An RNA of 207 nucleotides, treated with 2A3 and DMS and read out base by base. It was measured as part of the RMDB library OK3TST. The reactions ran in a buffer of 150 mM KOAc, 10 mM MgCl2 and 150 mM bicine (pH 8.5), at 24 C. For 2A3 the reverse transcriptase was SuperScript II with manganese. The DMS profile rests on 3,260 reads.
RNA sequence: GGGAACGACUCGAGUAGAGUCGAAAAAAGCUGAACAAGGUGGGUGGAUCCAUCAUUCAUCACAUCGCUCUUCUCAAGAGGGGGCUUGAGAACAACAAGGUUCAGUGUGAGAUGAUUCAGGGGUUCUGCAUUAUUCCGCAGACGAAGGAGGCGUGUACUAUCAUAGCCGUUUCGACGGCUAUGAUAGAAAAGAAACAACAACAACAAC
Reactivity to 2A3 in 0.01 (KOAc 150mM, MgCl2 10mM, bicine 150mM(pH8.5), 24C), signal-to-noise 2, nucleotides 027 to 156: a000a000g050c020u030g000a010a010c030a130a120g010g030u030g010g020g000u040g010g040a040u100c120c060a110u090c040a010u060u040c020a040u000c030a030c020a110u040c040g030c040u030c040u060u000c000u000c010a010a010g050a200g000g010g010g000g000c010u010u000g010a020g010a030a020c090a060a000c020a090a060g110g000u080u060c020a020g010u010g040u060g050a060g010a040u080g020a020u120u120c060a040g000g000g060g000u050u000c010u010g000c000a010u020u100a090u300u100c050c080g010c020a000g010a040c020g050a040a030g030g010a000g030g000c010g010u060g010u040a060
Reactivity to DMS in 0.01 (KOAc 150mM, MgCl2 10mM, bicine 150mM(pH8.5), 24C), signal-to-noise 2, nucleotides 027 to 156: a080a070g010c020u010g030a000a040c080a150a110g040g030u010g000g040g000u000g020g000a040u010c040c170a100u010c060a190u000u000c000a060u000c030a100c050a080u000c010g030c070u000c070u000u020c020u000c000a040a070g000a250g020g000g020g010g000c080u030u000g000a080g010a000a050c050a070a080c130a050a090g010g010u000u000c010a070g030u020g020u000g000a190g040a050u010g010a110u000u010c050a070g040g020g030g010u000u000c010u000g030c040a110u000u000a220u000u000c070c070g000c010a040g020a040c080g020a070a120g030g000a040g030g010c040g010u000g000u000a130